Chemical mapping of a 177-nucleotide RNA with 2A3.
For 2A3, 938 sequencing reads were counted.
For 2A3 the reverse transcriptase was SuperScript II with manganese.
It was measured as part of the RMDB library RFM100.
The RNA was probed in 150 mM KOAc, 10 mM MgCl2 and 150 mM bicine (pH 8.5) at 24 C.

RNA sequence: GGGAACGACUCGAGUAGAGUCGAAAAACGCGAGUACGCUCGCGAAUGUGUUAAUCCUCUUGGAAUGCAGCAAUUAUCACCUACCAUAUAGGUGUUAAGUGCUGAAUUUCAAAGGGAUUAUCACUAAGCCAAUAGACGCGUUCGCGCGUCUAUUGGCAAAAGAAACAACAACAACAAC
Reactivity to 2A3 in 0.01 (KOAc 150mM, MgCl2 10mM, bicine 150mM(pH8.5), 24C), signal-to-noise 1, nucleotides 027 to 126: a000c000g010c010g010a010g000u010a050c140g020c080u010c000g000c000g050a050a020u160g000u000g000u000u000a000a000u000c000c030u090c030u000u000g000g000a000a000u000g000c020a000g000c000a010a030u000u000a000u000c000a000c000c000u020a070c010c210a120u150a050u060a300g100g000u000g020u000u010a010a000g010u020g000c000u000g000a000a000u000u000u000c010a000a010a020g020g010g000a000u000u000a000u000c000a000c020u070a120a030